[RMDB]
Annotation
Chemical mapping of a 207-nucleotide RNA with 2A3 and DMS. The RNA was probed in 150 mM KOAc, 10 mM MgCl2 and 150 mM bicine (pH 8.5) at 24 C. As a SHAPE reagent, 2A3 marks flexible, mostly unpaired nucleotides at the ribose 2'-OH. For DMS, 5,510 sequencing reads were counted. For 2A3, 2,416 sequencing reads were counted.

RNA sequence: GGGAACGACUCGAGUAGAGUCGAAAAUAUAACACAAUCAGAUAACACACUCACUUGCGAUUUCUCCACGGAUCGUUGGUUGGCACUUACAUAUGGCAUUUAUAGUCUUUUAUCCGGUGUCGUGGUCCAUGACCUUGCCCUCCUGAGACACGCCAACAGAUCCUAUCAUGUUCGCAUGAUAGGAUCUAAAAGAAACAACAACAACAAC
Reactivity to 2A3 in 0.01 (KOAc 150mM, MgCl2 10mM, bicine 150mM(pH8.5), 24C), signal-to-noise 4, nucleotides 027 to 156: u110a000u100a060a080c080a030c070a110a130u190c070a060g090a140u170a240a020c020a010c000a010c050u060c000a030c020u010u060g020c030g060a060u020u070u080c060u030c030c040a050c060g010g020a040u010c010g020u030u070g020g020u020u070g020g000c000a030c060u130u100a020c110a070u130a060u080g010g050c020a030u010u150u080a140u170a050g020u020c000u020u140u070u070a070u010c030c050g000g000u050g040u050c020g050u100g010g020u020c040c030a050u110g060a070c020c000u030u130g010c000c000c000u040c010c000u010g020a000g010a020c040a000c060g000c000c020a000a010c010
Reactivity to DMS in 0.01 (KOAc 150mM, MgCl2 10mM, bicine 150mM(pH8.5), 24C), signal-to-noise 3, nucleotides 027 to 156: u000a100u000a050a090c060a100c060a120a120u010c040a110g000a100u000a090a080c060a080c070a070c060u010c060a050c050u010u000g010c020g010a160u000u000u000c020u020c030c030a140c080g000g030a030u000c010g020u010u000g030g000u030u010g030g020c030a080c090u000u000a090c070a060u010a070u000g020g030c020a100u000u000u000a100u000a150g030u000c030u000u000u000u010a090u020c090c030g020g060u000g020u000c020g000u010g010g010u000c030c050a070u000g000a040c030c020u000u000g020c020c020c030u010c030c010u000g020a120g010a060c040a030c050g000c050c010a050a080c100